Chemical mapping of a 207-nucleotide RNA with 2A3. The 2A3 profile rests on 1,161 reads. The RNA was probed in 150 mM KOAc, 10 mM MgCl2 and 150 mM bicine (pH 8.5) at 24 C. The data come from the RNA Mapping Database (RMDB), library M2RFPK.
[RMDB]
RNA sequence: GGGAACGACUCGAGUAGAGUCGAAAAACGAGUCGUACGCGACUCGAAUGGUAUUGUCGGCGUAAAAGAACAAGACGUCACCGGACGCGACCGGGCUAAAAAGCGAAGCGUCAUCUACGGAUGACGAAAAACGGACCUGGGUUCGCCCAGGUCCGAACCAGUGACAAUACUUCGGUAUUGUCACUGGAAAAGAAACAACAACAACAAC
Reactivity to 2A3 in 0.01 (KOAc 150mM, MgCl2 10mM, bicine 150mM(pH8.5), 24C), signal-to-noise 2, nucleotides 027 to 156: a000c010g000a000g000u010c020g010u060a050c280g020c000g080a000c000u000c000g020a010a080u100g040g090u180a100u140u150g100u060c060g010g010c020g040u080a080a060a110a090g130a120a050c050a120a000g160a000c010g000u000c000a000c010c010g010g000a020c000g020c000g000a010c000c000g000g000g000c050u060a030a030a000a000a000g020c020g050a060a010g100c010g010u000c000a000u010c010u020a040c200g130g000a000u000g010a000c000g030a060a030a000a000a000c000g000g000a000c000c000u010g000g050g020u050u100c200g080c030c000c000a000g000g000u020c000c000g000a000a000